[RMDB]
RNA sequence: GGGAACGACUCGAGUAGAGUCGAAAAGAAAGAAAGUACUGAAAGUAUUGUGGGAAAUAAUGUGUAAAUCAUUGACCGUUCCUGCGCUGGUACGAAUAAAAUUUUAGUCCAGACACCACCAGUAUAACCAAUCUAGUGACCUUCGGGUCACUAGAAACUUCCUGGUUAACUUCGGUUAACCAGGAAGAAAAGAAACAACAACAACAAC
Reactivity to 2A3 in 0.01 (KOAc 150mM, MgCl2 10mM, bicine 150mM(pH8.5), 24C), signal-to-noise 1, nucleotides 027 to 156: g030a020a090a010g030a090a150a000g060u060a030c010u000g070a040a180a060g110u150a190u160u210g010u040g000g000g050a050a030a000u100a050a000u090g010u000g020u100a000a080a090u080c000a010u010u050g050a030c040c000g020u050u110c020c020u090g020c060g000c020u020g000g020u070a050c050g020a050a010u200a100a110a040a060u030u090u120u120a010g010u000c010c000a000g030a040c020a010c100c000a030c010c000a030g030u040a040u010a170a020c090c110a090a000u000c000u010a000g000u000g000a000c000c000u010u030c180g060g020g000u010c010a000c000u000a000g000a000a000a000